[RMDB]
RNA sequence: GGGAACGACUCGAGUAGAGUCGAAAAUUCUUUUCUCGCAUGAGAGAAGAUGGAAAGACGGUUUCGGCUGUCACUUACAGAUGGGCCCGCGGCGCAUUAGCUAGUUGGUGAGGUAAUGGCUCACCAAUACAAGUGUGGUGUUCGCACCACACUUGUAAAAAGAAACAACAACAACAAC
Reactivity to DMS in 0.01 (KOAc 150mM, MgCl2 10mM, bicine 150mM(pH8.5), 24C), signal-to-noise 1, nucleotides 027 to 126: u010u000c000u000u010u000u000c000u000c010g030c300a150u000g020a020g020a040g000a020a000g020a030u010g000g030a080a060a180g000a050c050g000g000u000u000u000c170g000g040c010u010g000u000c040a080c110u000u000a120c150a110g000a090u010g000g000g020c030c060c070g060c090g000g040c060g030c060a060u000u030a090g000c060u000a080g050u010u000g000g040u000g000a010g000g000u000a070a040u010g000g020c000u000c000a010c010c000a000a040

This 177-nucleotide RNA was probed chemically with DMS. For DMS, 993 sequencing reads were counted. The RNA was probed in 150 mM KOAc, 10 mM MgCl2 and 150 mM bicine (pH 8.5) at 24 C.